[RMDB]
RNA sequence: GGGAACGACUCGAGUAGAGUCGAAAAUGAGGCCAGGUGCGACGCGGGGGCAACAGCCCGGCCUCAGCGAGGUCCCCUCGGGAGGUGCCUUCCGCGUCACGGAGUGCCGUGACCGGGGGUAACCCUGGUGUUUAAUUGUAUUCGUACAAUUAAACACAAAAGAAACAACAACAACAAC
Reactivity to DMS in 0.01 (KOAc 150mM, MgCl2 10mM, bicine 150mM(pH8.5), 24C), signal-to-noise 9, nucleotides 027 to 126: u010g010a040g010g010c000c000a090g010g020u010g010c100g000a090c150g010c070g010g010g000g010g000c030a080a070c110a210g010c000c000c020g000g010c000c010u000c000a030g020c100g010a040g000g000u010c010c010c010c040u000c040g000g000g010a090g010g010u000g000c000c000u000u040c000c000g000c190g010u000c000a010c010g010g010a300g020u030g020c010c010g010u000g000a020c000c000g000g000g000g000g010u010a040a050c020c000c030u000g010
Reactivity to 2A3 in 0.01 (KOAc 150mM, MgCl2 10mM, bicine 150mM(pH8.5), 24C), signal-to-noise 9, nucleotides 027 to 126: u080g000a010g010g000c030c040a060g040g040u180g080c070g040a050c050g060c050g050g040g020g050g000c030a100a030c020a090g030c000c000c000g000g000c000c000u000c000a000g020c040g030a020g000g050u040c010c000c000c000u030c020g040g020g010a130g000g020u020g000c000c000u300u270c040c000g010c090g000u010c000a000c000g010g010a200g140u220g190c020c000g000u000g000a000c000c000g000g000g010g000g000u020a050a070c010c000c010u040g090
This 177-nucleotide RNA was probed chemically with DMS and 2A3. DMS adducts were read by reverse transcription with MarathonRT. For 2A3 the reverse transcriptase was SuperScript II with manganese. Conditions: 150 mM KOAc, 10 mM MgCl2 and 150 mM bicine (pH 8.5), 24 C. Reactivities are given for positions 27 through 126.